[RMDB]
RNA sequence: GGGAACGACUCGAGUAGAGUCGAAAAAACUGGCCAAAUUUAGAAACUAUGAAAAAUUAGGUCUUUUUGUUAAAUUUUUGUCAUUCUGUGGUUAGCACAAAAUCUUCUAACAGGGCAUGAUGCUCAGUACAUAUGCACCUUUCGAGGUGCAUAUGUAAAAAGAAACAACAACAACAAC
Reactivity to DMS in 0.01 (KOAc 150mM, MgCl2 10mM, bicine 150mM(pH8.5), 24C), signal-to-noise 2, nucleotides 027 to 126: a080a050c090u010g000g010c020c090a040a040a020u000u010u010a040g000a300a110a160c220u000a030u000g010a070a130a060a050a060u000u000a080g010g000u000c000u000u010u010u000u030g000u010u000a030a100a150u000u000u020u000u010g010u000c020a070u000u000c090u020g000u010g020g000u010u000a040g010c250a040c070a030a070a050a080u010c110u000u000c060u000a020a040c100a070g020g020g000c010a100u010g020a040u000g020c040u000c030a110g000
Structure probing data (DMS) for a 177-nucleotide construct. Values are in units of 0.01, from 0 to 300, in steps of 10. The RNA was probed in 150 mM KOAc, 10 mM MgCl2 and 150 mM bicine (pH 8.5) at 24 C. DMS adducts were read by reverse transcription with MarathonRT. Values cover nucleotides 27 to 126.